Chemical mapping of a 177-nucleotide RNA with 2A3 and DMS.
It was measured as part of the RMDB library OK2TST.
Values cover nucleotides 27 to 126.
For 2A3, 744 sequencing reads were counted.
For DMS the reverse transcriptase was MarathonRT.

RNA sequence: GGGAACGACUCGAGUAGAGUCGAAAAUAGGAGAUUUACUAUGAUUAAUACUUCUGCGUCACUAGAGUUUGGAGAUGGCUCAAGAUAUGGUAUGCCUUCUGUAGGCUGUCUUCCCUUCCUCUGCUAGAUUGUCUGCUACGUUCGCGUAGCAGACAAUAAAAGAAACAACAACAACAAC
Reactivity to 2A3 in 0.01 (KOAc 150mM, MgCl2 10mM, bicine 150mM(pH8.5), 24C), signal-to-noise 1, nucleotides 027 to 126: u150a020g040g000a080g030a060u030u110u060a050c030u070a090u090g070a160u190u140a090a060u080a180c020u020u040c000u000g050c050g060u060c020a020c030u050a020g020a010g160u020u080u140g050g000a080g000a010u010g010g000c020u020c120a090a000g060a020u090a100u090g060g000u080a060u130g120c000c000u090u100c000u030g150u090a010g000g100c000u000g010u000c040u030u060c010c010c000u040u000c020c020u030c020u010g000c020u020a060g020
Reactivity to DMS in 0.01 (KOAc 150mM, MgCl2 10mM, bicine 150mM(pH8.5), 24C), signal-to-noise 2, nucleotides 027 to 126: u010a030g010g000a080g020a130u000u010u000a070c040u000a100u000g000a120u010u010a060a090u010a080c060u000u000c010u020g000c090g000u000c060a070c050u000a100g000a050g020u020u010u000g010g010a060g010a060u000g010g000c030u010c090a110a060g010a070u010a050u010g000g010u010a080u010g010c050c010u000u010c100u000g000u030a120g010g000c040u000g000u000c020u000u000c020c040c030u000u000c040c010u000c070u010g020c080u010a130g000